An RNA of 177 nucleotides, treated with 2A3 and DMS and read out base by base. For 2A3, 2,222 sequencing reads were counted. Source: RMDB library OK1LIB, as collected in RNAgym.
RNA sequence: GGGAACGACUCGAGUAGAGUCGAAAAUGCUUGAAGGCAGCAUGCUCCUUAAGAGUCAUCACCACUCCCUAAUCUCAAGUACCCAGGGACACAAAAACUGCGGAAGGCCGCAGGGACCUCUGCCUAGGACUGUUGGGUUUUUCGAAACCCAACAGUCAAAAGAAACAACAACAACAAC
Reactivity to 2A3 in 0.01 (KOAc 150mM, MgCl2 10mM, bicine 150mM(pH8.5), 24C), signal-to-noise 3, nucleotides 027 to 126: u080g000c010u040u060g090a120a050g080g000c020a000g000c000a070u030g010c000u020c020c000u030u060a060a010g020a010g060u070c030a000u050c060a090c010c000a030c030u060c020c010c000u070a110a120u090c050u010c040a040a030g030u040a060c000c010c010a000g010g020g050a020c000a000c000a110a120a040a080a000c010u030g010c000g010g040a140a050g270g040c010c000g010c010a020g000g000g010a020c000c000u010c010u010g000c000c010u050a060g060
Reactivity to DMS in 0.01 (KOAc 150mM, MgCl2 10mM, bicine 150mM(pH8.5), 24C), signal-to-noise 1, nucleotides 027 to 126: u020g000c050u070u000g000a010a060g010g050c140a060g000c040a040u000g000c100u000c000c020u000u010a210a070g000a010g000u000c050a120u010c020a100c020c000a100c030u000c000c000c000u060a110a100u040c020u000c040a070a110g020u000a020c000c010c000a110g010g000g000a060c000a020c150a070a040a060a110a280c000u030g030c000g000g000a240a170g000g000c110c000g030c060a020g000g050g000a030c040c050u000c000u000g030c000c030u000a220g000